[RMDB]
The record gives the reactivity of an RNA of 207 nucleotides to DMS and 2A3. 2A3 adducts were read by reverse transcription with SuperScript II with manganese.

RNA sequence: GGGAACGACUCGAGUAGAGUCGAAAAAACGUCCGAAGAUUAUAACUUCUUUUUCGGUAUGAAACUUUGGGGUCAAGUAAUUGGCGAUUCUGAUAUGGAGGAUCGCGCAAACAUUAUUUUGGGCAUUGAAAGAAAUGCUUUGAAUAAGUACAUGCUACUAGCAUUAUGCGUUCGCGCAUAAUGCUAGAAAAGAAACAACAACAACAAC
Reactivity to DMS in 0.01 (KOAc 150mM, MgCl2 10mM, bicine 150mM(pH8.5), 24C), signal-to-noise 1, nucleotides 027 to 156: a060a060c090g030u000c010c010g000a070a100g000a100u000u010a100u000a090a130c160u010u000c010u000u000u020u000u000c000g010g060u010a070u010g000a100a080a060c070u000u000u000g030g050g070g020u000c030a050a120g010u000a160a140u010u000g010g020c010g010a080u000u000c030u000g000a200u000a120u010g010g010a070g040g020a000u010c010g040c020g050c080a050a100a120c050a040u000u000a030u000u000u000u000g020g010g040c010a040u010u000g000a190a210a130g010a040a070a060u020g010c010u010u000u000g000a020a040u000a020a040g000u000a040c100a050u000g000c010u010a170
Reactivity to 2A3 in 0.01 (KOAc 150mM, MgCl2 10mM, bicine 150mM(pH8.5), 24C), signal-to-noise 2, nucleotides 027 to 156: a000a010c050g030u000c000c010g030a040a010g020a070u090u090a130u200a290a150c090u140u090c020u120u110u030u050u070c050g010g040u130a070u160g080a130a120a120c080u070u030u060g020g020g010g010u030c060a080a000g000u050a150a200u040u080g080g010c000g020a000u000u000c000u050g110a140u050a060u300g160g050a040g000g000a000u000c000g010c010g000c040a000a060a080c000a020u000u090a020u020u090u110u100g040g000g040c000a000u000u020g080a160a140a040g060a020a180a010u000g000c000u000u040u040g020a040a030u040a050a000g100u080a060c030a090u200g020c020u110a040
DMS adducts were read by reverse transcription with MarathonRT.
It was measured as part of the RMDB library OK3TST.
Conditions: 150 mM KOAc, 10 mM MgCl2 and 150 mM bicine (pH 8.5), 24 C.